[RMDB]
RNA sequence: GGGAACGACUCGAGUAGAGUCGAAAACGACCCGAAGAGGAAAGAAGGACUCGGACGCGAACCCGUAAGGUGAAACUUUCACAUUUAUUGGGGAGUACACUCGAGGAGUGGAAGGCGGGGAGACGGGCAAUAAUCCACUGUUCGCAGUGGAUUAUUGAAAAGAAACAACAACAACAAC
Reactivity to DMS in 0.01 (KOAc 150mM, MgCl2 10mM, bicine 150mM(pH8.5), 24C), signal-to-noise 3, nucleotides 027 to 126: c170g000a200c030c010c000g030a130a120g000a070g000g000a070a050a110g010a100a060g010g010a080c060u010c050g010g000a110c080g000c040g000a210a230c020c010c020g010u010a000a040g020g020u010g010a050a080a180c180u010u000u000c030a020c020a060u010u000u000a040u020u000g000g030g000g000a200g020u000a100c100a040c040u010c020g010a100g010g000a060g000u000g010g000a100a100g010g020c100g000g000g000g000a040g000a060c030g000g000g000
Reactivity to 2A3 in 0.01 (KOAc 150mM, MgCl2 10mM, bicine 150mM(pH8.5), 24C), signal-to-noise 1, nucleotides 027 to 126: c000g060a040c040c030c040g030a040a050g070a030g070g030a150a020a060g020a050a040g040g010a040c000u000c000g040g000a020c050g010c040g070a050a040c000c010c010g010u020a010a010g060g000u020g040a050a060a070c080u100u120u040c020a040c020a130u050u030u080a080u090u250g010g010g000g010a010g020u040a010c050a010c020u020c010g060a090g020g050a010g020u060g000g010a060a030g000g000c040g000g010g020g000a010g010a000c000g000g020g010